The data come from the RNA Mapping Database (RMDB), library ARCHII. Structure probing data (2A3 and DMS) for a 207-nucleotide construct. For DMS the reverse transcriptase was MarathonRT. 2A3 adducts were read by reverse transcription with SuperScript II with manganese. Values cover nucleotides 27 to 156. The RNA was probed in 150 mM KOAc, 10 mM MgCl2 and 150 mM bicine (pH 8.5) at 24 C.

[RMDB]
RNA sequence: GGGAACGACUCGAGUAGAGUCGAAAACUGCCUAAAAACCAGCAGGCGUGACCCGAUUUGGAUUGCUCGUGUUCAAUGACAGGUCUUAUUAUUAGCGAGAUACGAUCAAGCCUUGUCUAGCGGCUUGAUAAGAGAUUGAUAGACUCGCGGUUUCUAGCAAUGAUAAUCUCUUCGGAGAUUAUCAUUGAAAAGAAACAACAACAACAAC
Reactivity to 2A3 in 0.01 (KOAc 150mM, MgCl2 10mM, bicine 150mM(pH8.5), 24C), signal-to-noise 5, nucleotides 027 to 156: c010u050g000c000c010u110a160a140a090a070a090c090c040a030g080c040a010g070g000c060g100u080g020a030c000c000c030g010a010u020u010u030g000g010a000u020u070g010c010u000c020g030u020g000u030u040c020a020a030u030g030a040c040a060g020g030u000c080u130u090a200u110u070a100u040u190a060g010c010g000a000g000a010u030a000c010g000a000u000c000a000a000g000c000c000u110u270g020u020c000u010a010g030c000g020g010c000u000u000g000a000u000a000a010g020a000g040a040u060u290g080a020u030a020g020a010c000u030c110g140c090g070g000u000u010u010c000u010a010g030
Reactivity to DMS in 0.01 (KOAc 150mM, MgCl2 10mM, bicine 150mM(pH8.5), 24C), signal-to-noise 2, nucleotides 027 to 156: c020u010g050c000c020u010a060a090a050a110a110c150c070a080g030c030a060g030g020c090g040u000g020a110c010c050c010g000a200u000u000u010g000g010a020u000u000g030c020u000c060g090u000g030u000u010c010a030a060u010g000a300c220a030g030g020u010c040u010u010a090u000u000a110u010u000a080g000c010g020a010g000a120u000a160c070g000a030u010c010a030a040g020c000c010u000u030g040u000c060u000a090g040c200g020g000c010u000u010g000a020u010a040a070g010a140g010a110u010u000g020a120u000a070g010a100c010u000c030g030c040g030g020u000u010u000c000u000a200g000